About this RNA:
Structure probing data (DMS and 2A3) for a 177-nucleotide construct. Source: RMDB library RFM100, as collected in RNAgym.

[RMDB]
RNA sequence: GGGAACGACUCGAGUAGAGUCGAAAAGAUAAUCAGGACAGGCUAAACAUUCGCUAUAGUACGACCAUGCAUGUGUCCCCAGACCUAGUUCUUUACCUGGGUCUGGUUUUCUCAAUGCUGGUGACAAAUAGCAUGGCCAAUUCGUUGGCCAUGCUAUAAAAGAAACAACAACAACAAC
Reactivity to DMS in 0.01 (KOAc 150mM, MgCl2 10mM, bicine 150mM(pH8.5), 24C), signal-to-noise 2, nucleotides 027 to 126: g010a080u040a090a130u020c150a050g000g010a020c060a030g000g030c060u000a030a170a080c080a130u000u040c090g020c080u000a060u020a070g010u050a130c140g000a000c040c000a020u030g070c060a010u000g020u000g040u000c070c050c000c000a000g000a000c000c000u010a010g000u000u050c300u080u050u030a090c180c000u000g000g020g010u000c000u020g000g000u000u000u000u000c000u000c000a060a000u010g060c010u000g020g010u000g000a120c130a040a110
Reactivity to 2A3 in 0.01 (KOAc 150mM, MgCl2 10mM, bicine 150mM(pH8.5), 24C), signal-to-noise 2, nucleotides 027 to 126: g020a040u170a050a010u060c040a000g000g110a090c000a000g060g020c070u090a110a160a000c020a120u090u120c150g080c110u090a070u060a170g130u120a120c120g090a020c020c010a040u300g000c000a000u040g000u030g000u150c000c040c000c000a000g000a000c000c010u020a000g110u260u190c020u100u220u090a080c020c000u000g000g000g010u000c000u000g000g020u000u000u000u000c000u000c000a010a010u020g000c010u020g000g000u000g020a010c050a020a170
DMS adducts were read by reverse transcription with MarathonRT. The reactions ran in a buffer of 150 mM KOAc, 10 mM MgCl2 and 150 mM bicine (pH 8.5), at 24 C. For DMS, 1,858 sequencing reads were counted.